An RNA of 177 nucleotides, treated with DMS and read out base by base. Source: RMDB library RFMREP, as collected in RNAgym. DMS adducts were read by reverse transcription with MarathonRT.
RNA sequence: GGGAACGACUCGAGUAGAGUCGAAAAUAGAGGAAAGUCCAGGCUCGCCCAAGCUGAGAUGCUUGGAGUGUUCGUACCUGGCGCAAGCCAGGGCAAGUGAGGCGCAAGCCUCGCUGACGGCGUGGAACCCUGAAGUCUAGUUCGCUAGACUUCAGGGAAAAGAAACAACAACAACAAC
Reactivity to DMS in 0.01 (KOAc 150mM, MgCl2 10mM, bicine 150mM(pH8.5), 24C), signal-to-noise 1, nucleotides 027 to 126: u000a100g080a050g000g000a050a100a120g000u000c020c010a060g000g000c030u010c060g040c100c000c010a020a010g000c010u000g030a210g000a050u000g010c000u000u000g040g000a080g080u000g010u000u000c070g040u010a090c000c010u000g000g030c000g010c230a080a080g010c010c000a010g010g010g000c090a070a020g010u010g000a040g010g010c000g050c300a130a190g000c000c000u010c000g000c020u010g010a070c060g000g000c060g010u020g000g040a190a170